[RMDB]
RNA sequence: GGGAACGACUCGAGUAGAGUCGAAAAGCGGGUAACUUCGGUUACCCGCAAAGACGCGUCUCGUCGCGUCGCCGUCGCGUCGCGGCGCGUCGCGUGGCGAGAAAAGGACGAAGUUCGCUUCGUCCAAUCAAGUAAAGCACUUCGGUGCUUUACUUGAAAAAGAAACAACAACAACAAC
Reactivity to DMS in 0.01 (KOAc 150mM, MgCl2 10mM, bicine 150mM(pH8.5), 24C), signal-to-noise 4, nucleotides 027 to 126: g010c000g020g000g020u000a010a000c000u010u010c210g040g030u000u000a000c010c000c000g000c010a000a020a070g000a030c030g010c030g000u000c010u000c000g020u000c000g020c000g020u010c030g030c010c300g010u000c100g010c000g010u000c040g020c010g010g000c010g000c090g010u000c020g020c010g020u000g010g030c090g010a150g000a080a080a100a150g000g000a010c000g010a010a010g020u000u010c200g010c000u000u000c000g000u010c000c010a020a030